Chemical mapping of a 177-nucleotide RNA with DMS and 2A3. The 2A3 profile rests on 1,394 reads.
RNA sequence: GGGAACGACUCGAGUAGAGUCGAAAACGAGCGCGCACUAUUUCGGCUUACCUAUCUUCGUGGGUCCGGUUCGAUCCGCGCGGUCAGAAUGUCUCAAUUCGAGUAAUCAAUUGUGCAGUUCUAGCAGCUGUCCAUAAUCGUUCGCGAUUAUGGACAGAAAAGAAACAACAACAACAAC
Reactivity to DMS in 0.01 (KOAc 150mM, MgCl2 10mM, bicine 150mM(pH8.5), 24C), signal-to-noise 1, nucleotides 027 to 126: c180g000a020g000c000g000c030g000c030a170c130u010a130u010u000u000c000g000g010c060u000u000a010c040c000u000a070u010c160u010u020c280g020u010g000g010g000u040c180c110g000g010u000u000c020g010a030u000c170c140g020c020g010c020g000g000u030c010a080g000a080a020u010g000u000c020u000c000a070a060u000u010c060g000a010g030u050a090a080u030c100a110a080u000u020g040u000g010c010a050g000u000u000c010u010a130g040c130a040g020
Reactivity to 2A3 in 0.01 (KOAc 150mM, MgCl2 10mM, bicine 150mM(pH8.5), 24C), signal-to-noise 2, nucleotides 027 to 126: c060g000a020g010c000g010c010g000c010a020c050u130a200u020u080u050c010g040g000c000u020u030a020c000c000u000a060u040c160u280u090c100g010u110g000g000g000u040c080c040g030g000u290u300c020g010a030u040c060c020g000c000g000c000g020g090u000c010a000g050a100a050u140g020u020c020u010c000a020a010u020u020c040g000a010g040u050a020a120u060c050a020a150u110u080g070u050g000c060a050g010u030u000c010u030a050g070c030a010g030
Record summary:
For 2A3 the reverse transcriptase was SuperScript II with manganese. The reactions ran in a buffer of 150 mM KOAc, 10 mM MgCl2 and 150 mM bicine (pH 8.5), at 24 C. Values cover nucleotides 27 to 126.